[RMDB]
RNA sequence: GGGAACGACUCGAGUAGAGUCGAAAAUCCCAAAGCGGAUUUAGCUCGGUUGGGAGAGUCCCAGACCGAAGAUCUGGUGGUCCUGUGUUCGAUCCACAGAAUUCGCACCAUAAACAACGGGAGAUUCGGAUAGGUACCUCUUCGGAGGUACCUAUCCAAAAGAAACAACAACAACAAC
Reactivity to 2A3 in 0.01 (KOAc 150mM, MgCl2 10mM, bicine 150mM(pH8.5), 24C), signal-to-noise 3, nucleotides 027 to 126: u000c000c000c000a070a020a000g070c010g010g020a020u040u100u140a010g010c050u000c030g050g000u010u030g000g000g010a190g030a050g140u200c000c000c000a010g140a020c000c010g040a080a040g050a080u040c010u050g070g010u050g010g030u070c000c020u090g020u010g030u110u140c030g020a040u020c000c000a000c000a030g090a030a050u030u010c000g020c040a000c000c000a000u170a060a080a030c080a110a010c050g020g100g010a130g000a030u120u100c060
Reactivity to DMS in 0.01 (KOAc 150mM, MgCl2 10mM, bicine 150mM(pH8.5), 24C), signal-to-noise 1, nucleotides 027 to 126: u020c000c000c030a030a100a100g000c150g000g000a030u000u020u000a200g020c120u000c010g000g010u030u020g000g000g010a190g020a220g000u010c050c000c020a050g020a020c000c040g010a010a080g000a170u000c080u010g050g040u060g000g020u030c020c000u000g000u000g000u000u020c150g000a150u000c150c030a010c010a080g000a100a080u000u020c000g000c060a040c030c120a040u050a090a190a050c020a010a110c060g110g010g000a210g000a210u020u000c190
Source: RMDB library OK1LIB, as collected in RNAgym. This 177-nucleotide RNA was probed chemically with 2A3 and DMS. The reactions ran in a buffer of 150 mM KOAc, 10 mM MgCl2 and 150 mM bicine (pH 8.5), at 24 C. Values cover nucleotides 27 to 126. For DMS the reverse transcriptase was MarathonRT. The 2A3 profile rests on 1,335 reads.